[RMDB]
RNA sequence: GGGAACGACUCGAGUAGAGUCGAAAAGCCCCCGCGGAGCCGCCCUUGGAAUACCGCCCUCGCCGCACCGGCGUCCUAACCCCGUCCCGUGGAGCCGGGCGGGGGACCGUGCCAGGUGGGCAGUUUGCCUUCACACAUCAUUCGUGAUGUGUGAAGGAAAAGAAACAACAACAACAAC
Reactivity to 2A3 in 0.01 (KOAc 150mM, MgCl2 10mM, bicine 150mM(pH8.5), 24C), signal-to-noise 2, nucleotides 027 to 126: g010c000c000c000c000c000g010c010g010g040a010g020c000c000g010c010c000c030u040u080g060g030a110a020u060a150c010c010g030c000c010c000u040c040g010c010c000g130c020a010c020c000g000g000c000g050u010c000c010u030a030a030c000c000c010c010g130u230c040c040c010g020u100g110g050a040g070c040c000g000g000g000c000g010g000g000g000g000a030c000c030g010u010g000c000c010a010g000g010u010g000g000g000c000a000g010u030u070u170g050
Reactivity to DMS in 0.01 (KOAc 150mM, MgCl2 10mM, bicine 150mM(pH8.5), 24C), signal-to-noise 1, nucleotides 027 to 126: g010c080c010c000c090c080g050c020g020g000a070g000c000c060g050c010c000c060u000u000g000g030a140a130u020a020c160c040g000c070c000c010u010c130g010c040c050g000c030a030c020c000g020g010c000g020u010c000c000u000a170a240c000c010c000c030g000u010c000c000c000g020u020g000g000a120g030c300c030g000g000g010c040g000g020g000g000g000a020c260c080g000u020g010c000c010a100g030g050u030g020g000g040c000a120g020u000u020u030g010